[RMDB]
RNA sequence: GGGAACGACUCGAGUAGAGUCGAAAAGUUUUUCAUCGCAGUCGCUGCGAUCUGCGCACCUGUCACUACGCCCACCACCUCGACCGCAGGUACGGCGACCACCGGCUGGAUCGCUGCCGUUAAUGUGAUUUAUGCUGUUCUUCGGAACAGCAUAAAUAAAAGAAACAACAACAACAAC
Reactivity to DMS in 0.01 (KOAc 150mM, MgCl2 10mM, bicine 150mM(pH8.5), 24C), signal-to-noise 3, nucleotides 027 to 126: g010u010u000u010u000u010c060a100u000c040g020c050a070g020u010c090g000c060u000g010c050g010a020u000c040u000g000c070g020c130a040c050c010u010g010u000c080a070c070u000a070c100g000c020c020c000a070c050c050a080c020c020u000c060g010a100c140c080g010c040a040g000g010u010a060c070g000g020c030g000a080c050c080a060c080c090g010g010c060u010g020g000a080u000c080g010c020u000g010c030c030g010u010u020a030a080u000g020u000g000
Reactivity to 2A3 in 0.01 (KOAc 150mM, MgCl2 10mM, bicine 150mM(pH8.5), 24C), signal-to-noise 1, nucleotides 027 to 126: g020u020u000u000u160u170c050a060u040c060g000c020a030g050u210c070g060c220u040g060c100g020a020u000c000u010g020c060g000c050a100c020c010u110g020u100c020a010c090u110a020c100g030c000c000c000a010c000c000a030c000c020u030c010g040a080c000c050g040c050a010g040g040u090a040c070g020g000c020g060a080c050c010a020c000c000g130g010c040u030g020g060a030u060c030g000c070u070g010c050c000g090u070u140a120a080u220g010u060g080

This 177-nucleotide RNA was probed chemically with DMS and 2A3. Values cover nucleotides 27 to 126. For 2A3 the reverse transcriptase was SuperScript II with manganese. Conditions: 150 mM KOAc, 10 mM MgCl2 and 150 mM bicine (pH 8.5), 24 C.